[RMDB]
RNA sequence: GGGAACGACUCGAGUAGAGUCGAAAAGAUAUGGACCGUGUAAGGGAGGAGGUCACUCGGAAACGAGUGACACUCCGAGGAUCUUACCGGUCCUAAGUCAAACCUAUGGGGGUUCGCCCCCAUAGGACUACUUAUUGCGGUUCGCCGCAAUAAGUAGAAAAGAAACAACAACAACAAC
Reactivity to 2A3 in 0.01 (KOAc 150mM, MgCl2 10mM, bicine 150mM(pH8.5), 24C), signal-to-noise 2, nucleotides 027 to 126: g000a000u010a000u060g000g010a000c000c000g060u070g010u200a010a010g000g020g010a030g000g000a010g000g030u000c000a000c000u000c000g010g020a020a000a000c000g010a000g000u010g000a000c000a060c010u010c000c000g000a030g010g000a010u000c000u000u000a010c010c000g000g010u030c010c000u010a000a000g010u000c020a010a040a110c000c000u000a000u010g010g000g000g000g010u020u090c200g210c010c020c040c000c000a000u000a000g000g000a020
Reactivity to DMS in 0.01 (KOAc 150mM, MgCl2 10mM, bicine 150mM(pH8.5), 24C), signal-to-noise 1, nucleotides 027 to 126: g010a020u000a050u010g000g000a010c000c000g000u010g000u000a000a010g030g000g000a000g050g020a010g010g000u000c000a010c010u000c010g010g000a000a010a030c000g000a030g020u000g010a010c020a010c010u000c000c000g000a070g030g010a010u010c000u000u000a010c010c020g000g000u010c000c000u000a000a050g000u000c000a130a130a200c010c010u000a010u010g000g010g010g030g000u000u010c300g010c000c000c000c000c000a000u000a010g010g000a200